[RMDB]
RNA sequence: GGGAACGACUCGAGUAGAGUCGAAAAUAGGUCUGGUAGGUGACUUUUUCACCCGUGACCGGGUGAAUGACCGUGUCCUUCGGGCCCUUCUUGGGCUGGGUCUCGGUACGGGUCACCGUACGGUUGGCAAGCAACUCGCUGAGGAUCUGCUGGCGCAGCCACAAAGUUAGUUCGCUAACUUUGUGGCAAAAGAAACAACAACAACAAC
Reactivity to 2A3 in 0.01 (KOAc 150mM, MgCl2 10mM, bicine 150mM(pH8.5), 24C), signal-to-noise 4, nucleotides 027 to 156: u150a020g010g010u030c070u100g090g020u060a050g010g010u000g000a010c000u130u050u000u030u000c010a010c000c000c030g050u150g080a090c150c010g000g000g000u020g020a030a050u080g030a010c010c010g000u010g000u070c020c000u050u100c100g070g030g000c020c020c000u150u150c110u160u260g010g000g000c030u060g020g010g040u000c050u030c050g000g000u050a100c060g040g000g010u020c020a000c010c010g000u000a000c000g000g010u030u020g010g000c060a060a030g010c000a030a060c020u040c080g120c090u120g040a050g010g030a050u040c040u060g010c020u010g020g000c020g020c070a020
Reactivity to DMS in 0.01 (KOAc 150mM, MgCl2 10mM, bicine 150mM(pH8.5), 24C), signal-to-noise 3, nucleotides 027 to 156: u000a050g010g010u010c010u010g000g040u000a090g020g020u000g000a040c060u000u000u000u000u000c030a020c010c000c010g000u020g030a150c240c040g030g020g020u000g010a030a040u000g000a090c000c020g010u000g010u000c010c020u000u000c080g060g000g000c010c000c010u000u000c130u000u000g020g020g040c000u000g020g010g010u000c010u000c020g030g010u010a070c210g010g000g020u000c030a030c000c000g010u000a020c030g000g000u000u000g010g020c090a130a160g000c010a050a050c030u000c070g030c060u010g000a180g030g010a050u000c040u000g020c040u000g010g010c060g020c070a210